[RMDB]
RNA sequence: GGGAACGACUCGAGUAGAGUCGAAAAGGCUGUUAAGGAUGUUGAAACUAUAGCAGAUGCAAGGGAGUGCAGAGGAGGGUUCCAUACACGGGAAACUUCUAAACAGUUUCAGGGGGGUAAAGAAACAGUAGGAUACAUAAUUCGUUAUGUAUCCUACAAAAGAAACAACAACAACAAC
Reactivity to 2A3 in 0.01 (KOAc 150mM, MgCl2 10mM, bicine 150mM(pH8.5), 24C), signal-to-noise 2, nucleotides 027 to 126: g030g000c020u020g020u100u050a060a050g070g020a080u120g060u140u090g080a120a050a050c030u040a040u100a190g030c040a020g020a070u080g040c040a050a060g030g020g030a060g040u070g010c040a010g030a030g100g040a020g020g030g000u050u000c020c000a050u100a150c100a010c080g020g000g000a020a020a000c000u010u040c000u020a070a090a040c050a040g020u000u050u040c030a010g000g000g000g000g000g020u050a100a120a010g040a020a090a010c010a010
Reactivity to DMS in 0.01 (KOAc 150mM, MgCl2 10mM, bicine 150mM(pH8.5), 24C), signal-to-noise 9, nucleotides 027 to 126: g010g010c020u000g010u000u000a070a120g010g010a090u000g010u010u010g010a120a090a110c060u010a100u000a060g000c040a050g010a090u000g000c100a080a120g000g000g010a090g010u010g010c090a070g000a100g010g010a060g000g000g010u000u000c020c020a090u000a080c210a100c200g000g000g000a020a020a020c030u000u010c070u010a070a080a120c180a030g000u000u000u000c030a100g010g000g000g000g000g000u000a030a060a080g000a100a040a060c160a090
Structure probing data (2A3 and DMS) for a 177-nucleotide construct. For 2A3, 8,236 sequencing reads were counted. It was measured as part of the RMDB library OK2TRN. The RNA was probed in 150 mM KOAc, 10 mM MgCl2 and 150 mM bicine (pH 8.5) at 24 C. As a SHAPE reagent, 2A3 marks flexible, mostly unpaired nucleotides at the ribose 2'-OH.